[RMDB]
RNA sequence: GGGAACGACUCGAGUAGAGUCGAAAACUAUGGCUUGGCAAUGAGGGUGUAUGAGAGCAAGCCAAUAAGAAAUAUGCUACUCAGGCUGGCUAACACCAAGCCGGGCACACCUGCAUAUGAGCGUGCGAAGCAGACAUCACUUCGGUGAUGUCUGCUUAAAAGAAACAACAACAACAAC
Reactivity to 2A3 in 0.01 (KOAc 150mM, MgCl2 10mM, bicine 150mM(pH8.5), 24C), signal-to-noise 2, nucleotides 027 to 126: c040u090a090u160g080g000c010u000u000g080g000c010a040a160u120g060a130g090g150g000u070g040u080a080u140g090a070g000a000g050c000a000a000g060c050c060a000a040u190a030a000g080a020a110a020u200a050u090g010c030u080a230c000u040c040a000g030g000c030u090g010g000c020u050a160a000c010a010c080c000a060a000g000c000c000g000g010g060c050a010c000a000c000c000u070g000c000a020u110a060u190g100a040g080c080g000u110g010c040g070
Reactivity to DMS in 0.01 (KOAc 150mM, MgCl2 10mM, bicine 150mM(pH8.5), 24C), signal-to-noise 2, nucleotides 027 to 126: c010u000a060u000g000g010c020u000u000g010g030c120a100a180u020g010a110g020g010g010u000g000u010a080u000g010a030g020a090g020c030a020a050g000c010c050a060a080u020a080a120g000a060a070a060u000a070u000g010c020u000a120c050u000c080a100g010g000c020u000g000g000c010u000a050a070c230a180c130c030a050a040g020c000c010g030g010g050c080a060c070a080c000c030u010g010c050a020u000a050u000g000a150g020c040g000u000g020c060g000